[RMDB]
RNA sequence: GGGAACGACUCGAGUAGAGUCGAAAAGUCAGAGUUUCGACUCUGACAAAAAACCGUAGGUUCGUUCAGGACAUGCUGAACACCUUCGAAAGAGGGUGAGCAGCAACAGCCUGACUGCGAACCUAAACGGAAAAACUAUUCACUUCGGUGAAUAGAAACAAUACCCAACUUUCGAGUUGGGUAUUGUAAAAGAAACAACAACAACAAC
Reactivity to DMS in 0.01 (KOAc 150mM, MgCl2 10mM, bicine 150mM(pH8.5), 24C), signal-to-noise 2, nucleotides 027 to 156: g020u010c020a020g030a060g010u000u010u010c280g000a190c020u010c000u010g020a020c000a000a020a070a050a030a070c010c000g020u020a030g000g010u010u000c020g000u010u000c040a070g010g010a050c050a300u020g030c000u010g030a030a080c020a000c000c000u000u010c020g020a140a150a230g000a040g010g020g020u000g000a110g020c000a020g000c000a030a050c060a230g050c010c010u000g000a020c300u010g060c010g010a030a010c000c010u000a000a020a070c040g020g000a070a090a110a190a190c010u010a010u000u000c000a010c000u000u010c300g040g000u010g000a040a000u020a010g010a070a110
Reactivity to 2A3 in 0.01 (KOAc 150mM, MgCl2 10mM, bicine 150mM(pH8.5), 24C), signal-to-noise 3, nucleotides 027 to 156: g010u000c010a000g000a010g020u040u070u300c200g070a070c010u010c000u000g000a000c000a000a020a010a010a010a000c010c000g000u020a020g000g000u010u000c000g010u050u020c010a000g000g020a080c090a280u080g010c000u000g010a060a010c000a000c000c000u000u010c010g070a100a070a040g010a000g030g020g010u010g010a040g030c010a000g000c010a010a020c020a040g050c000c000u010g020a040c030u080g010c000g000a000a010c000c000u000a050a080a010c000g050g050a070a090a010a010a030c000u000a000u000u000c000a000c010u050u100c270g070g000u000g000a000a000u000a000g020a020a050

Conditions: 150 mM KOAc, 10 mM MgCl2 and 150 mM bicine (pH 8.5), 24 C. An RNA of 207 nucleotides, treated with DMS and 2A3 and read out base by base. High 2A3 reactivity points to a flexible backbone, as in loops and unpaired stretches. 2A3 adducts were read by reverse transcription with SuperScript II with manganese. The DMS profile rests on 3,165 reads.